An RNA of 177 nucleotides, treated with 2A3 and DMS and read out base by base. The RNA was probed in 150 mM KOAc, 10 mM MgCl2 and 150 mM bicine (pH 8.5) at 24 C. It was measured as part of the RMDB library OK1LIB. For DMS, 4,847 sequencing reads were counted. The 2A3 profile rests on 3,219 reads.
RNA sequence: GGGAACGACUCGAGUAGAGUCGAAAAAGUCCUGGUGUUUCGGUCCCUGUUGAUGUAGCAAAUGAUUUAUCUCUUGGACUCAAUUAUAUGUUUUUUACACUGCCUUCUAAAAAUCUGAUCAUGCAAGAUCAAUCGUUACUUUCGAGUAACGAUUGAUAAAAGAAACAACAACAACAAC
Reactivity to 2A3 in 0.01 (KOAc 150mM, MgCl2 10mM, bicine 150mM(pH8.5), 24C), signal-to-noise 6, nucleotides 027 to 126: a000g070u100c030c000u020g030g010u050g030u020u040u040c080g010g010u030c010c000c010u020g040u090u050g020a120u050g030u090a020g050c050a060a080a130u120g090a120u070u090u140a070u020c030u000c010u020u050g040g020a030c040u010c050a040a110u240u080a050u030a070u180g140u050u040u000u030u070u050a040c040a020c010u050g040c010c000u070u090c060u170a060a070a040a040a050u030c060u080g060a060u060c040a060u140g070c050a080a050g010
Reactivity to DMS in 0.01 (KOAc 150mM, MgCl2 10mM, bicine 150mM(pH8.5), 24C), signal-to-noise 3, nucleotides 027 to 126: a110g010u000c000c010u000g000g030u010g000u000u000u030c030g000g000u010c010c030c020u000g000u000u000g000a070u010g020u020a050g030c050a040a070a060u030g000a040u010u000u010a090u000c040u020c070u000u000g000g000a090c050u020c070a060a040u030u020a080u030a050u030g000u000u010u000u030u060u010a120c120a110c070u010g000c040c050u000u000c040u010a010a040a050a050a030u010c060u000g010a030u000c050a100u020g050c150a100a070g000